[RMDB]
This 207-nucleotide RNA was probed chemically with DMS and 2A3. Conditions: 150 mM KOAc, 10 mM MgCl2 and 150 mM bicine (pH 8.5), 24 C. For 2A3, 3,163 sequencing reads were counted. For DMS the reverse transcriptase was MarathonRT. For 2A3 the reverse transcriptase was SuperScript II with manganese. Values cover nucleotides 27 to 156.
RNA sequence: GGGAACGACUCGAGUAGAGUCGAAAACACUCGGAGAUGAAGGCGCGCGUCCAGGCGAGCACGAAGGAGGCGAGGUGCGAGGGGUAGCGGUCGUUGCGCACCAAUGGGGAGCGCUUCUCGAGGGUCUGCAGGCAGAUGGCGGUGUCGUCGGCGUCGACACUAGACGUUGUUUCGACAACGUCUAGUGAAAAGAAACAACAACAACAAC
Reactivity to DMS in 0.01 (KOAc 150mM, MgCl2 10mM, bicine 150mM(pH8.5), 24C), signal-to-noise 1, nucleotides 027 to 156: c040a040c080u000c030g020g000a150g010a090u000g020a100a030g050g030c070g020c010g020c040g000u000c040c100a110g020g050c050g000a060g090c060a100c140g020a110a090g050g000a150g020g020c040g020a110g000g010u010g010c040g000a130g010g010g000g020u010a080g020c000g010g010u000c040g010u000u000g000c020g000c000a050c030c030a080a110u000g000g000g050g050a040g010c030g020c020u000u040c020u020c020g000a170g020g010g000u000c020u000g010c010a060g020g000c020a050g010a120u000g000g000c000g000g020u000g000u000c010g010u000c020g000g010c070g040u000c020g000a250
Reactivity to 2A3 in 0.01 (KOAc 150mM, MgCl2 10mM, bicine 150mM(pH8.5), 24C), signal-to-noise 3, nucleotides 027 to 156: c080a020c010u060c060g090g030a090g010a060u150g060a080a050g040g000c020g000c010g010c010g110u030c040c040a030g090g020c020g030a040g000c040a030c130g050a040a050g040g020a020g020g000c040g020a050g000g050u050g030c060g030a060g000g030g030g010u050a030g030c030g050g030u050c030g050u040u050g020c050g030c000a050c030c000a060a150u160g070g000g000g010a060g010c030g000c000u040u000c040u030c030g030a060g010g010g040u010c030u060g010c050a040g020g020c010a030g020a090u100g030g030c040g020g050u050g010u030c030g000u010c030g010g010c010g010u040c020g010a010